[RMDB]
RNA sequence: GGGAACGACUCGAGUAGAGUCGAAAAAAUUUGCCGCCGAGAACGGGUUGAUGGUAGCGGGGGAUAACGUUGACUUUAUCCCACCGAGGGGCGGGGAAACCUACCUUAAAGCCUCCUACGUCGAGGCGGAUUCAAGAACGGUUGACCUGUCAAGGAAGAUCAGUUAACGAUUCGUCGUUAACUGAUCAAAAGAAACAACAACAACAAC
Reactivity to 2A3 in 0.01 (KOAc 150mM, MgCl2 10mM, bicine 150mM(pH8.5), 24C), signal-to-noise 2, nucleotides 027 to 156: a000a030u050u070u060g060c000c010g000c000c040g070a040g040a090a010c020g000g050g050u120u110g060a190u070g080g050u020a070g060c000g000g070g000g000g000a000u000a050a010c070g130u030u200g040a040c040u000u030u000a000u050c000c020c060a110c050c000g030a030g000g010g020g000c130g020g000g000g000a000a020a000c000c000u020a020c010c000u110u030a040a230a000g010c010c000u020c000c000u080a150c120g130u140c050g020a010g010g000c000g000g000a010u050u090c010a010a010g000a110a020c030g000g000u030u010g010a020c000c000u000g030u070c080a080a060g040g040a160a080
Reactivity to DMS in 0.01 (KOAc 150mM, MgCl2 10mM, bicine 150mM(pH8.5), 24C), signal-to-noise 1, nucleotides 027 to 156: a000a060u010u010u000g000c030c000g010c060c050g000a200g000a140a060c060g050g000g030u000u000g020a010u010g020g000u000a050g000c060g000g030g000g090g000a080u010a010a060c100g000u030u000g010a120c130u010u000u000a080u000c000c030c000a010c000c000g040a240g000g000g010g010c030g060g040g050g000a140a050a190c030c000u010a150c090c020u000u000a150a080a300g020c020c000u000c010c000u000a100c070g000u010c080g020a140g020g040c020g040g010a150u020u000c110a050a080g000a180a080c040g020g030u000u010g000a150c040c000u000g030u000c010a050a110g000g000a110a180
Structure probing data (2A3 and DMS) for a 207-nucleotide construct. High 2A3 reactivity points to a flexible backbone, as in loops and unpaired stretches. The RNA was probed in 150 mM KOAc, 10 mM MgCl2 and 150 mM bicine (pH 8.5) at 24 C.